[RMDB]
RNA sequence: GGGAACGACUCGAGUAGAGUCGAAAAUACGCCGGAGUUCGCCGUCUGAGGACGAAGGAAGAGAAUAAUCAGACUAGCGACUGGGACGCCUGUUGGUAGGCAGAACAGCUCGCGAAUGAUCAAUAUGCCAACUACACUCGUAGACGCUUAAGUGGCCCAUUUCACCUAUCUUCGGAUAGGUGAAAUGAAAAGAAACAACAACAACAAC
Reactivity to DMS in 0.01 (KOAc 150mM, MgCl2 10mM, bicine 150mM(pH8.5), 24C), signal-to-noise 2, nucleotides 027 to 156: u000a110c020g000c000c000g000g010a300g000u000u000c010g020c020c070g050u000c050u000g000a140g020g000a090c040g020a300a190g000g030a120a070g000a060g030a120a160u000a050a120u000c030a040g000a040c020u000a160g010c000g030a030c010u000g000g000g030a300c170g030c010c000u010g010u000u010g020g050u000a000g010g010c000a060g010a300a300c040a040g000c060u000c030g040c020g000a050a020u010g000a120u000c080a020a110u020a060u000g000c010c010a060a060c030u000a060c070a070c030u000c030g000u000a140g020a050c030g020c030u010u010a040a200g010u030g000g000c040c120
Reactivity to 2A3 in 0.01 (KOAc 150mM, MgCl2 10mM, bicine 150mM(pH8.5), 24C), signal-to-noise 4, nucleotides 027 to 156: u100a020c010g000c010c010g050g010a060g010u010u000c000g010c010c010g000u010c000u000g010a020g000g010a000c010g000a010a020g030g030a020a020g040a010g040a100a220u140a060a020u070c000a000g000a000c000u000a000g000c000g000a000c000u010g000g000g010a000c010g000c000c010u020g010u010u000g010g000u030a000g000g000c000a000g000a000a010c000a010g020c150u010c010g000c000g000a000a010u100g040a140u190c060a000a000u010a000u010g000c000c000a020a000c000u030a020c020a020c030u090c020g070u060a060g070a150c060g050c080u150u150a180a030g020u140g080g030c020c010
Source: RMDB library RSTRND, as collected in RNAgym. Structure probing data (DMS and 2A3) for a 207-nucleotide construct. The 2A3 profile rests on 4,045 reads. High 2A3 reactivity points to a flexible backbone, as in loops and unpaired stretches. The reactions ran in a buffer of 150 mM KOAc, 10 mM MgCl2 and 150 mM bicine (pH 8.5), at 24 C.